Structure probing data (DMS and 2A3) for a 207-nucleotide construct.
For 2A3, 3,373 sequencing reads were counted.
For 2A3 the reverse transcriptase was SuperScript II with manganese.
For DMS, 3,477 sequencing reads were counted.

RNA sequence: GGGAACGACUCGAGUAGAGUCGAAAAUUCAUCACCAUCCACUGGUUCCUGCCGGUUUCUUCACUUUAUCCUGUCUGGACCAGAUCCCAUUUUGAUCAGCAGGGUUGUGAUCAGAAAACAAGUCCUGCCAGUCUCCUACCUCACCUUAUCCUCACCAAGCUUUAUAUACCUUCGGGUAUAUAAAGCUAAAAGAAACAACAACAACAAC
Reactivity to DMS in 0.01 (KOAc 150mM, MgCl2 10mM, bicine 150mM(pH8.5), 24C), signal-to-noise 2, nucleotides 027 to 156: u010u010c030a070u000c060a180c030c060a110u010c030c030a130c040u010g000g010u000u000c020c040u000g050c040c060g020g000u000u020u010c020u010u010c060a080c040u010u020u010a100u020c030c020u000g000u010c040u010g050g030a060c050c030a100g030a060u000c080c020c030a260u000u010u000u000g030a050u010c040a150g030c040a070g010g040g030u010u010g020u000g020a070u010c070a120g010a060a070a140a090c040a040a060g010u000c020c000u000g000c050c020a090g000u010c020u010c020c020u000a090c060c040u000c040a040c030c030u010u010a110u000c040c010u010c040a100c020c020a140
Reactivity to 2A3 in 0.01 (KOAc 150mM, MgCl2 10mM, bicine 150mM(pH8.5), 24C), signal-to-noise 5, nucleotides 027 to 156: u070u030c030a040u060c010a020c040c010a050u080c040c010a060c040u030g000g030u110u110c020c010u040g050c020c030g050g030u080u070u060c070u110u110c070a080c070u140u120u170a080u140c010c000u050g090u110c030u060g040g030a030c010c020a020g020a050u040c010c020c000a050u090u100u070u120g070a060u070c020a010g010c010a020g000g010g050u040u030g010u010g030a100u080c060a050g140a040a070a020a020c030a020a020g080u060c000c000u000g010c020c000a000g020u000c010u030c030c010u020a050c000c030u040c010a040c050c000u050u050a030u150c010c100u160c010a030c300c010a040